[RMDB]
RNA sequence: GGGAACGACUCGAGUAGAGUCGAAAACUGUGUCAUCUGGAGAAAUAGGGCCCCACUGGCUGUACUGAUAACUGCUAUCAUUUUUGAUGACUAACCAUUGCUAGGCAUUAUUCUAGAUCUUUACACUCAGUAGGCCACUUAGUGCUCAUAAUGACCCCGAUCGCAGCAUAUUCGUAUGCUGCGAUCGAAAAGAAACAACAACAACAAC
Reactivity to 2A3 in 0.01 (KOAc 150mM, MgCl2 10mM, bicine 150mM(pH8.5), 24C), signal-to-noise 2, nucleotides 027 to 156: c070u100g000u000g000u110c000a040u010c050u180g050g000a010g040a020a150a120u120a080g000g000g020c000c000c050c070a000c000u010g000g000c000u010g010u040a010c000u030g020a040u080a110a150c040u080g050c060u100a070u080c050a160u030u000u060u140u230g070a020u000g030a020c050u060a040a090c010c030a170u070u300g000c020u060a050g040g000c030a120u060u030a070u140u140c050u050a020g000a110u020c040u000u020u030a020c030a000c030u000c000a000g000u020a010g020g010c010c000a080c010u010u090a060g060u030g150c000u000c020a040u070a170a040u040g030a010c000c000c000